RNA sequence: GGGAACGACUCGAGUAGAGUCGAAAAGGAAAGAUAAAUCCUUUGUAGACGACUUAACUACAGAACGGGGUGUUGUAAGCAUGAGAGUAGUCUUGUACUACGAUCUGCUGAGAUUUAGCCCUUGUUCCCUCAGUCCUACGUUCGCGUAGGACUGAGGAAAAGAAACAACAACAACAAC
Reactivity to DMS in 0.01 (KOAc 150mM, MgCl2 10mM, bicine 150mM(pH8.5), 24C), signal-to-noise 3, nucleotides 027 to 126: g020g010a020a090a090g020a160u050a080a150a110u000c000c000u000u000u010g000u020a120g010a150c070g000a070c130u000u020a040a110c050u000a040c110a080g020a090a070c120g000g000g000g030u000g010u000u060g010u010a180a010g000c000a050u030g000a030g000a260g010u020a000g000u000c020u070u010g010u050a020c000u000a000c000g000a120u010c010u000g000c000u000g000a120g010a120u020u010u020a160g000c000c000c000u000u020g000u000u000c000
Reactivity to 2A3 in 0.01 (KOAc 150mM, MgCl2 10mM, bicine 150mM(pH8.5), 24C), signal-to-noise 2, nucleotides 027 to 126: g040g040a040a070a030g150a010u170a120a040a070u090c000c040u000u020u010g130u040a060g000a070c110g030a030c020u050u120a030a010c000u040a020c020a000g020a010a010c000g010g000g000g020u060g000u160u040g000u100a010a020g000c000a000u300g030a000g000a000g020u000a000g000u000c070u120u300g060u160a000c000u000a020c020g020a010u000c030u000g000c000u000g010a060g000a010u060u140u300a020g000c000c000c000u040u120g000u000u020c000